This 177-nucleotide RNA was probed chemically with 2A3 and DMS. For DMS the reverse transcriptase was MarathonRT. Conditions: 150 mM KOAc, 10 mM MgCl2 and 150 mM bicine (pH 8.5), 24 C. The data come from the RNA Mapping Database (RMDB), library OK2TRN. The 2A3 profile rests on 2,480 reads.

[RMDB]
RNA sequence: GGGAACGACUCGAGUAGAGUCGAAAAGCCGGAUCGACGAGCGCGUGUUCCGGCCCGGCAUGCGGAUGCCGUCGAUCCGCAAGCUCGCGCUCGACAAGAGCGUGUCGCGCUUCACGGUCGUCGAGGAGCAGGGAUGAGUAUUCGUACUCAUCCCUGCAAAAGAAACAACAACAACAAC
Reactivity to 2A3 in 0.01 (KOAc 150mM, MgCl2 10mM, bicine 150mM(pH8.5), 24C), signal-to-noise 1, nucleotides 027 to 126: g040c010c020g000g010a010u010c010g000a000c010g030a060g130c060g000c010g020u020g010u060u060c040c050g020g060c040c030c000g020g000c020a020u020g010c000g100g030a110u240g070c010c010g010u000c010g010a020u010c000c000g040c010a000a020g030c020u010c010g000c000g010c000u020c000g030a070c060a100a110g000a020g040c010g000u010g030u020c070g010c010g000c090u060u060c030a050c030g030g080u040c020g030u010c030g020a040g040g060a010
Reactivity to DMS in 0.01 (KOAc 150mM, MgCl2 10mM, bicine 150mM(pH8.5), 24C), signal-to-noise 2, nucleotides 027 to 126: g020c090c020g010g000a060u000c010g010a040c010g020a090g010c020g050c000g040u010g010u000u000c060c030g010g020c020c070c120g000g000c000a020u000g040c040g000g000a160u010g010c080c050g020u000c020g000a000u000c000c010g020c070a110a060g030c030u010c020g010c020g000c000u010c010g010a120c210a150a140g000a050g000c000g000u020g000u000c040g000c070g000c000u000u000c060a110c090g020g010u000c030g000u000c010g020a060g010g000a220